[RMDB]
RNA sequence: GGGAACGACUCGAGUAGAGUCGAAAAAGUACCUUACGAGGUACAGUGCGGGGACGCUGUCUACGCACCCCGCGCCAUCUGUCGGGAGCCGUCCGUUACGGCACGGGACGGCACAGAUGAGAGGAAACUUUCGGUUUCCAUUCGUGGAAACCGAAAGAAAAGAAACAACAACAACAAC
Reactivity to DMS in 0.01 (KOAc 150mM, MgCl2 10mM, bicine 150mM(pH8.5), 24C), signal-to-noise 1, nucleotides 027 to 126: a040g010u000a000c040c000u000u110a130c090g000a080g010g030u030a020c000a030g020u010g000c030g020g000g020g020a080c080g010c060u000g010u040c130u020a130c140g000c100a040c000c010c000c000g000c020g010c020c000a000u010c000u000g000u010c190g040g010g000a150g000c030c010g000u030c000c000g000u000u060a130c120g010g020c250a050c050g000g000g030a050c000g000g060c000a130c000a070g000a000u000g030a060g020a300g010g000a100a030a100
Reactivity to 2A3 in 0.01 (KOAc 150mM, MgCl2 10mM, bicine 150mM(pH8.5), 24C), signal-to-noise 3, nucleotides 027 to 126: a000g000u020a030c020c000u110u050a130c300g090a010g000g000u000a000c000a000g000u030g020c000g040g010g050g000a090c110g010c060u040g140u300c080u120a120c050g000c000a080c000c000c000c000g000c020g000c000c000a000u000c000u000g010u010c150g000g150g080a050g000c000c000g050u030c000c000g020u130u180a150c190g040g000c010a010c040g050g000g000a000c000g000g000c010a000c000a000g010a000u020g000a020g000a000g140g100a110a020a020